Structure probing data (DMS and 2A3) for a 177-nucleotide construct. For DMS, 52,559 sequencing reads were counted.
[RMDB]
RNA sequence: GGGAACGACUCGAGUAGAGUCGAAAAAAGUUGCCGUAUGUGCGAUGACGAUGGCGCGAUGGCAUACGGGAUGGAUAUGUGGCAGGACCCACGGGAAUGGAUGGGCAUCGUCGCCUUUUCGCCAGCAAUGACUAUUUAGUUUCGACUAAAUAGUCAUAAAAGAAACAACAACAACAAC
Reactivity to DMS in 0.01 (KOAc 150mM, MgCl2 10mM, bicine 150mM(pH8.5), 24C), signal-to-noise 9, nucleotides 027 to 126: a060a100g000u000u000g020c010c010g010u010a050u000g020u010g020c030g010a080u000g010a070c080g010a050u010g010g010c020g020c020g000a070u010g010g000c030a040u000a040c070g000g010g010a110u010g010g010a120u000a060u010g020u000g010g010c070a110g010g010a160c100c010c010a050c080g010g010g000a100a080u010g000g010a100u000g010g010g010c020a030u000c030g000u010c040g010c020c010u000u000u000u000c040g010c030c020a090g010c160a120
Reactivity to 2A3 in 0.01 (KOAc 150mM, MgCl2 10mM, bicine 150mM(pH8.5), 24C), signal-to-noise 9, nucleotides 027 to 126: a000a000g120u080u040g090c020c000g050u080a100u150g120u060g030c040g040a070u070g040a050c110g080a070u110g030g000c010g000c020g040a050u090g060g010c020a010u050a070c050g010g010g060a090u120g050g040a040u060a050u250g070u050g040g000c050a050g060g090a090c010c000c010a010c020g030g000g050a080a120u150g040g070a050u030g000g000g020c000a010u020c020g120u050c050g010c010c030u030u070u020u040c020g000c010c010a020g020c040a060